[RMDB]
RNA sequence: GGGAACGACUCGAGUAGAGUCGAAAAUUAAUAACUGUAGACCAUGUUAACUUGCAGCGAAGCUUAUCGAAUGGUAAAUAACAGUAGAUAAGAACGUUCAACGACUAGAAAGUGAAGAUUACCAACUCGCUUGAUGCUUUUUCGAAAGCAUCAAGCGAAAAGAAACAACAACAACAAC
Reactivity to 2A3 in 0.01 (KOAc 150mM, MgCl2 10mM, bicine 150mM(pH8.5), 24C), signal-to-noise 1, nucleotides 027 to 126: u170u060a070a090u080a090a000c000u000g040u030a000g000a000c000c000a000u010g000u030u050a030a030c200u160u140g080c160a020g000c000g000a160a200g080c000u000u000a000u000c050g100a090a000u020g000g010u220a110a110a110u260a000a000c040a000g150u060a020g000a000u000a000a000g000a020a010c000g000u000u030c000a080a300c000g000a000c000u190a050g050a180a150a050g020u030g140a120a000g010a010u050u040a050c000c000a000a000c020u000